[RMDB]
RNA sequence: GGGAACGACUCGAGUAGAGUCGAAAAGAUAUGGAGGACGAACUCGCUCUUGCGACGAAGUCGGAAACGACAGAGCAAGAGAACUACGAGAGCGUCCUCCUAAGUCAAAGCGCUCUUCGGAGCGCAACUUUAUACAAGCGUUCGCGCUUGUAUAAAGAAAAGAAACAACAACAACAAC
Reactivity to 2A3 in 0.01 (KOAc 150mM, MgCl2 10mM, bicine 150mM(pH8.5), 24C), signal-to-noise 4, nucleotides 027 to 126: g030a010u030a040u110g010g010a000g010g010a000c000g010a050a050c000u000c000g020c020u010c000u020u020g020c040g100a290c080g130a300a050g010u010c020g000g010a040a060a000c010g010a000c020a030g130a010g040c010a010a010g010a010g040a040a040c100u240a050c040g010a000g010a010g020c000g000u000c000c000u000c000c000u000a000a000g000u000c000a030a000a030g010c000g000c010u000c000u050u110c300g130g010a000g010c000g000c000a000a000
Reactivity to DMS in 0.01 (KOAc 150mM, MgCl2 10mM, bicine 150mM(pH8.5), 24C), signal-to-noise 4, nucleotides 027 to 126: g000a040u010a300u010g010g000a020g000g000a020c000g010a020a020c010u000c010g000c010u000c010u000u000g010c010g010a160c230g000a080a110g010u000c000g000g000a070a090a150c000g010a010c010a060g010a180g000c000a010a000g010a020g000a070a030c120u020a300c030g000a020g010a030g000c010g010u000c010c010u010c000c000u000a000a050g000u000c030a080a100a120g010c000g000c000u000c000u000u010c150g010g000a000g020c000g010c010a000a010